Structure probing data (DMS and 2A3) for a 177-nucleotide construct. It was measured as part of the RMDB library OK1LIB. 2A3 adducts were read by reverse transcription with SuperScript II with manganese.
[RMDB]
RNA sequence: GGGAACGACUCGAGUAGAGUCGAAAAAGCAAUGUUGAAGAGGGGUUUGGUUCCCUAAAACCAAACACGCGUUUGCCAUUUUGCAGUACAGUAAACAACUGGUAACAGUGCAUGUUACACAGUGCACCCAGUAUGAGCCAUUCGUGGCUCAUACUGGAAAAGAAACAACAACAACAAC
Reactivity to DMS in 0.01 (KOAc 150mM, MgCl2 10mM, bicine 150mM(pH8.5), 24C), signal-to-noise 3, nucleotides 027 to 126: a050g030c050a050a020u000g000u020u000g020a040a090g010a100g000g010g010g010u010u000u000g000g000u000u000c050c100c050u060a040a050a050a010c000c010a010a030a030c030a070c080g010c140g000u000u000u000g030c000c100a090u000u000u000u020g000c010a130g020u070a060c130a110g000u010a030a020a080c080a090a020c000u000g000g010u020a010a000c020a030g000u070g010c100a050u000g010u020u020a010c020a080c090a030g020u000g000c100a070c190
Reactivity to 2A3 in 0.01 (KOAc 150mM, MgCl2 10mM, bicine 150mM(pH8.5), 24C), signal-to-noise 2, nucleotides 027 to 126: a000g080c070a080a080u200g000u070u150g130a140a040g050a040g010g080g000g000u010u000u000g020g010u020u090c090c010c000u140a080a080a000a000c030c000a000a020a010c000a000c050g040c030g070u050u020u040g110c020c030a120u100u070u040u100g000c030a000g010u090a070c030a040g050u120a050a060a050c080a050a010c050u000g010g020u010a000a000c010a000g050u070g140c090a010u020g040u020u080a020c200a000c020a020g000u010g040c000a030c000